Chemical mapping of a 177-nucleotide RNA with DMS and 2A3.
For 2A3, 4,084 sequencing reads were counted.
Conditions: 150 mM KOAc, 10 mM MgCl2 and 150 mM bicine (pH 8.5), 24 C.
RNA sequence: GGGAACGACUCGAGUAGAGUCGAAAAUAACAGCAAUAUAAAGUGUUUUCAGUUUUUAUUAGCUUAAACGUAAUGGCAGCCAUUGUAAACAUUUUCAGUGAUCUCGCACUACGCAAAUUUAAUGAAAAAUGCUUCUACUAUUCGUAGUAGAAGCAUUAAAAGAAACAACAACAACAAC
Reactivity to DMS in 0.01 (KOAc 150mM, MgCl2 10mM, bicine 150mM(pH8.5), 24C), signal-to-noise 3, nucleotides 027 to 126: u050a090a120c100a080g000c070a110a020u000a060u030a050a030a050g000u010g000u010u020u000u020c060a070g010u020u000u010u010u000a040u030u020a090g040c030u000u030a060a060a100c070g000u000a050a090u000g000g020c010a020g020c240c010a040u000u000g000u000a020a060a140c130a030u010u000u000u000c040a030g010u020g000a040u020c060u000c040g000c060a040c020u010a050c110g020c130a030a030a090u010u040u020a030a050u020g000a000a050a020
Reactivity to 2A3 in 0.01 (KOAc 150mM, MgCl2 10mM, bicine 150mM(pH8.5), 24C), signal-to-noise 5, nucleotides 027 to 126: u120a030a060c040a000g100c040a100a040u050a020u070a260a120a040g090u030g030u050u040u120u100c060a020g010u000u010u010u070u060a110u020u040a030g030c010u040u060a060a040a060c050g030u040a100a030u080g070g000c010a000g010c020c010a020u060u050g080u170a040a090a090c090a130u090u070u030u070c010a010g000u000g080a080u060c020u020c080g010c020a010c030u060a030c020g010c080a050a050a140u150u190u220a150a180u190g120a020a060a000

Reactivities are given for positions 27 through 126.